[RMDB]
RNA sequence: GGGAACGACUCGAGUAGAGUCGAAAACAAGGCUGUGAAACAACACAGCCACAAAUUUCCAGCAGUAGUCAGCUGUCUGGACAGAACCAUUCCUGGGAUGGUGUUACACUGCUGGGAGAAGAAUGUCUUCUCUUCAUCCAGUUGCCUCCAUCACUGUUCUGGUGGUGUCUGGCACUGGUGCAAGGCAGAACUGUGCUUCCUUGAGAGUGUGCUGAGCAUUCACCUUGGCUGCUUGGUUCUAGUCUGGGAGCAGACACAGAAAACAAACUGUUCCAUUCGUGGAACAGAAAAGAAACAACAACAACAAC
Reactivity to 2A3 in 0.01 (KOAc 150mM, MgCl2 10mM, bicine 150mM(pH8.5), 24C), signal-to-noise 9, nucleotides 027 to 266: c040a060a110g000g000c000u000g000u010g070a230a220a050c040a090a000c000a010c000a000g000c000c000a000c000a000a020a000u040u020u010c010c010a020g020c020a010g040u240a030g010u050c050a020g010c020u050g110u160c010u050g060g020a000c000a010g040a020a020c030c030a080u130u110c020c020u050g050g030g030a090u040g020g040u060g030u080u050a020c020a000c020u040g020c000u010g010g040g010a010g020a020a010g070a080a110u180g080u070c000u010u000c010u000c000u060u090c040a080u060c010c000a020g030u170u090g050c000c000u000c010c000a000u010c000a010c010u100g230u300u230c160u300g020g000u010g010g000u020g090u120c070u030g000g000c000a000c000u000g000g010u010g000c030a030a020g010g000c010a000g010a060a050c060u080g040u070g120c000u040u050c010c000u030u030g050a040g000a010g100u050g020u040g040c080u070g040a020g010c010a010u120u230c020a090c030c010u030u050g020g010c040u060g040c010u060u070g000g020u000u000c000u020a080g010u000c000u010g010g010g000a010g000c010a000g020a000c010a000c000a040g190a040a130a010a010c070a050a060a060
Reactivity to DMS in 0.01 (KOAc 150mM, MgCl2 10mM, bicine 150mM(pH8.5), 24C), signal-to-noise 8, nucleotides 027 to 266: c110a120a110g010g000c000u010g020u000g000a120a130a160c270a150a220c000a010c000a010g000c000c000a000c080a040a110a140u000u000u000c000c000a050g000c050a030g010u000a070g020u000c150a120g010c030u000g010u010c030u000g000g010a050c150a040g000a170a050c050c060a060u000u010c040c070u010g010g010g010a040u000g000g000u000g000u000u000a070c070a070c000u000g010c030u000g000g000g000a010g010a080a050g000a260a160u010g000u000c010u000u000c000u000c010u000u010c130a050u010c010c000a010g010u010u010g020c010c000u000c100c000a010u000c000a010c000u000g000u020u020c180u030g010g020u000g010g020u000g000u020c050u000g000g010c010a010c010u000g000g010u000g000c130a070a030g010g000c030a020g000a050a080c070u010g000u000g000c010u000u000c010c000u000u000g000a130g010a040g010u000g000u000g000c200u000g010a210g000c010a010u000u000c020a090c130c020u000u010g000g000c240u000g000c040u000u010g010g010u000u000c000u000a100g020u000c000u000g000g000g010a040g010c040a030g010a020c020a050c130a140g000a130a070a100a110c150a070a110a180